[RMDB]
RNA sequence: GGGAACGACUCGAGUAGAGUCGAAAAACCGGAGGCCGACAAUCCAGGGAACCGGAUGUCAUCACGUUGUUGCAGUACCAGAUGGCAUCUUAAAACCGAUCUGCAAAUAAGCAUGUAGAAAGCUGAUAAAAUCACACACACUUCGGUGUGUGUGAAAGGAACAUUAACCGUUCGCGGUUAAUGUUCCAAAAGAAACAACAACAACAAC
Reactivity to 2A3 in 0.01 (KOAc 150mM, MgCl2 10mM, bicine 150mM(pH8.5), 24C), signal-to-noise 1, nucleotides 027 to 156: a010c000c010g040g020a000g040g070c060c020g020a000c100a080a040u000c020c000a060g070g000g000a020a010c080c030g010g040a000u000g010u000c010a020u040c000a000c180g070u050u060g100u150u070g020c070a020g020u100a140c050c050a090g000a000u000g010g010c000a010u010c030u010u060a020a080a000a040c030c010g040a150u000c000u020g000c000a000a000a120u100a100a050g040c050a010u110g000u070a040g090a040a020a010g000c020u010g040a050u130a080a160a000a000u000c000a000c000a000c000a000c000a000c000u000u040c230g030g010u020g000u000g000u000g000u000g010a000a000a000
The record gives the reactivity of an RNA of 207 nucleotides to 2A3.
As a SHAPE reagent, 2A3 marks flexible, mostly unpaired nucleotides at the ribose 2'-OH.
For 2A3 the reverse transcriptase was SuperScript II with manganese.
Conditions: 150 mM KOAc, 10 mM MgCl2 and 150 mM bicine (pH 8.5), 24 C.
It was measured as part of the RMDB library M2RFPK.